[RMDB]
Chemical mapping of a 177-nucleotide RNA with DMS.
Conditions: 150 mM KOAc, 10 mM MgCl2 and 150 mM bicine (pH 8.5), 24 C.
It was measured as part of the RMDB library TTRINS.
Values cover nucleotides 27 to 126.
RNA sequence: GGGAACGACUCGAGUAGAGUCGAAAAGAUAUGGAUCGCCUGCUUUACAGCCGUAUGGAGAUAACGAUCGGAAACGAUCGGUAUCUAUGAAGUACGGAACUACUGUAAAGCAGGCGAUCCUAAGUCACGUAUACUCGUACUUCGGUACGAGUAUACGAAAAGAAACAACAACAACAAC
Reactivity to DMS in 0.01 (KOAc 150mM, MgCl2 10mM, bicine 150mM(pH8.5), 24C), signal-to-noise 1, nucleotides 027 to 126: g010a060u000a300u000g020g000a040u000c000g000c010c000u000g010c010u000u000u000a010c020a000g000c000c000g000u000a000u000g000g000a000g000a020u000a010a000c000g020a000u000c000g000g000a130a100a230c020g020a000u000c000g000g000u000a000u000c000u000a220u040g000a100a170g000u000a000c000g030g020a050a040c020u000a300c030u000g000u000a010a020a020g010c040a000g000g010c000g000a000u000c000c000u000a000a020g030u000c030a300